Structure probing data (DMS and 2A3) for a 177-nucleotide construct. The reactions ran in a buffer of 150 mM KOAc, 10 mM MgCl2 and 150 mM bicine (pH 8.5), at 24 C. DMS adducts were read by reverse transcription with MarathonRT.
RNA sequence: GGGAACGACUCGAGUAGAGUCGAAAACACAGGCACAACUCGUCCAAAGCUCAAAGUUGGUAUAGCUGCUGCUCAGAAAACUCAAAGUGCUUCAAUUGGAUGGAAUGUUUGUGGUGGUGCUGUACCACCCACGAUGGUACUUCGGUACCAUCGUGGGAAAAGAAACAACAACAACAAC
Reactivity to DMS in 0.01 (KOAc 150mM, MgCl2 10mM, bicine 150mM(pH8.5), 24C), signal-to-noise 2, nucleotides 027 to 126: c040a030c000a070g010g000c030a000c090a070a070c060u010c050g000u010c010c010a050a060a080g000c030u000c060a130a080a060g000u000u000g010g010u010a100u000a060g020c010u010g030c180u010g010c020u020c100a160g010a090a060a040a040c040u020c070a080a060a100g010u010g020c020u000u020c120a020a140u010u000g030g010a020u000g020g020a110a090u010g000u000u010u010g030u060g020g000u000g000g020u000g010c080u000g020u000a090c000c030a110
Reactivity to 2A3 in 0.01 (KOAc 150mM, MgCl2 10mM, bicine 150mM(pH8.5), 24C), signal-to-noise 2, nucleotides 027 to 126: c020a000c010a000g130g000c020a020c010a120a090c040u020c040g000u050c020c020a050a060a010g020c050u070c040a130a170a040g020u060u040g080g060u110a050u040a120g030c050u110g000c080u080g050c010u040c050a020g170a020a090a010a000c030u040c030a220a020a000g060u100g060c000u060u160c100a090a300u090u070g020g040a030u050g040g140a130a080u130g050u050u040u040g080u050g040g060u010g000g000u030g050c060u060g030u070a020c000c020a040